[RMDB]
RNA sequence: GGGAACGACUCGAGUAGAGUCGAAAAGGUCAGCUAAAGUUGUGCGAUUUAAUUGCUUGAGAAUAUUAAGCUCAAACAAAACAGGAGGAGUUGCAGGGACGAAGUCUUAAUUUUUGGUACAACAAGAGGCAUCUAUCUUGUUCGCAAGAUAGAUGCCAAAAGAAACAACAACAACAAC
Reactivity to DMS in 0.01 (KOAc 150mM, MgCl2 10mM, bicine 150mM(pH8.5), 24C), signal-to-noise 1, nucleotides 027 to 126: g010g010u010c120a090g010c010u000a040a240a130g030u010u000g000u000g020c120g000a090u030u010u020a080a080u000u000g010c060u000u060g000a020g000a060a000u040a200u000u010a060a240g000c030u000c030a000a000a000c080a000a000a100a080c160a100g000g000a090g000g000a110g060u000u030g000c030a060g000g000g030a030c120g000a040a140g020u000c000u000u040a000a040u000u030u000u020u050g000g010u020a040c150a060a010c100a050a110g010a160
Reactivity to 2A3 in 0.01 (KOAc 150mM, MgCl2 10mM, bicine 150mM(pH8.5), 24C), signal-to-noise 2, nucleotides 027 to 126: g070g020u020c000a010g000c070u070a220a010a000g000u040u030g030u000g050c010g000a050u000u000u140a100a130u040u020g000c000u000u070g050a000g000a060a040u090a190u170u120a110a000g050c000u000c010a000a030a050c010a030a080a020a000c030a010g000g000a000g000g030a100g040u130u070g050c050a020g000g000g080a020c050g050a080a030g030u030c000u040u180a230a170u070u060u000u120u120g110g000u020a040c020a200a010c010a070a000g080a110